[RMDB]
Chemical mapping of a 207-nucleotide RNA with DMS. Values are in units of 0.01, from 0 to 300, in steps of 10. The reactions ran in a buffer of 150 mM KOAc, 10 mM MgCl2 and 150 mM bicine (pH 8.5), at 24 C.

RNA sequence: GGGAACGACUCGAGUAGAGUCGAAAAAACCCGUUGAUUGAAAUUGAACCGUCCUGUUAACGAAAGAUAGGCAGAAGAUACGAAAUGUGUGACAGCAUGGGAAGUAAAGGCAGACCGUGGUUCCCUUAAAAUCGUCGAAUCUUCGGAUUCGACGAAAUCCUCUAUAAUGGUUCGCCAUUAUAGAGGAAAAAGAAACAACAACAACAAC
Reactivity to DMS in 0.01 (KOAc 150mM, MgCl2 10mM, bicine 150mM(pH8.5), 24C), signal-to-noise 1, nucleotides 027 to 156: a060a100c010c000c020g050u000u000g000a130u000u040g010a030a200a050u070u000g010a090a100c050c020g020u000c080c010u010g080u010u000a090a120c080g000a140a120a070g000a090u000a060g010g040c050a090g000a070a070g010a170u000a100c050g000a070a110a050u010g040u020g000u000g010a140c050a130g030c060a110u000g010g020g010a030a080g030u000a010a070a060g000g020c040a090g010a060c030c030g000u000g010g010u010u000c010c000c040u000u000a030a030a050a170u000c000g020u000c000g030a080a000u000c000u000u020c300g080g010a030u000u000c000g000a000c000g010a000a050a050